[RMDB]
Structure probing data (DMS and 2A3) for a 177-nucleotide construct. The reactions ran in a buffer of 150 mM KOAc, 10 mM MgCl2 and 150 mM bicine (pH 8.5), at 24 C. For DMS the reverse transcriptase was MarathonRT.
RNA sequence: GGGAACGACUCGAGUAGAGUCGAAAAUAAGCUCUUCACUGGGUCUGCGACCUGACGGAGUCUUUCAAAUCGCCGGAUCGGGAAGAUCUUCCUUCACGCCUCGUCAGGCCGUGCUAACUUUGGAAAGCCAUAUGAUCUGGUUCGCCAGAUCAUAUGGAAAAGAAACAACAACAACAAC
Reactivity to DMS in 0.01 (KOAc 150mM, MgCl2 10mM, bicine 150mM(pH8.5), 24C), signal-to-noise 5, nucleotides 027 to 126: u010a080a120g010c050u000c050u000u000c040a050c040u010g020g020g020u000c040u000g020c020g000a050c050c050u000g000a010c090g020g000a070g010u000c030u010u000u000c050a040a050a070u010c040g000c170c200g000g000a020u000c300g020g010g000a020a020g000a020u000c050u010u000c030c010u000u000c040a030c140g000c080c050u010c060g010u000c040a040g010g010c020c010g010u000g000c170u000a040a150c090u000u000u000g010g010a090a110a110g010
Reactivity to 2A3 in 0.01 (KOAc 150mM, MgCl2 10mM, bicine 150mM(pH8.5), 24C), signal-to-noise 4, nucleotides 027 to 126: u050a000a010g010c000u000c010u070u040c030a040c100u130g100g000g030u020c030u060g010c020g010a020c010c010u000g010a000c020g020g020a010g010u000c000u010u050u030c040a070a090a040u050c040g070c160c070g180g010a030u050c030g020g000g030a000a010g000a020u020c000u050u040c020c000u030u020c030a020c050g000c000c030u050c010g130u140c030a010g000g000c020c010g000u020g000c030u080a250a270c030u030u080u070g070g050a120a030a010g040